[RMDB]
RNA sequence: GGGAACGACUCGAGUAGAGUCGAAAAUAGUGGGGAACGUCUUAAGGCUGUCGCGACCUUAAGUUGUACAAUUGUGACUAGCUGAUCUUAAAACCCGUUGCUAGGUGUUAGGUAAAGCGAAAUUCUAAAGUAGCAACUACGCUCGUAGAAGCUGAUGCUCUCUCCGAGGGUUCGCCCUCGGAGAGAGAAAAGAAACAACAACAACAAC
Reactivity to 2A3 in 0.01 (KOAc 150mM, MgCl2 10mM, bicine 150mM(pH8.5), 24C), signal-to-noise 1, nucleotides 027 to 156: u150a020g020u120g010g000g020g000a000a110c000g010u000c010u010u000a020a000g070g010c090u190g100u000c000g010c020g000a030c000c010u010u010a030a060g030u080u190g020u130a190c170a130a070u080u200g020u000g000a000c000u010a010g010c000u010g010a030u150c010u020u050a000a000a050a070c020c000c000g030u010u010g010c020u010a000g030g000u000g000u020u000a000g010g030u010a030a050a000g010c060g050a010a020a020u260u090c150u170a010a070a110g050u010a000g020c000a010a000c000u040a030c010g000c000u000c000g100u110a090g040a130a000g020c000u010g010a040u150g000
The record gives the reactivity of an RNA of 207 nucleotides to 2A3. As a SHAPE reagent, 2A3 marks flexible, mostly unpaired nucleotides at the ribose 2'-OH. The reactions ran in a buffer of 150 mM KOAc, 10 mM MgCl2 and 150 mM bicine (pH 8.5), at 24 C.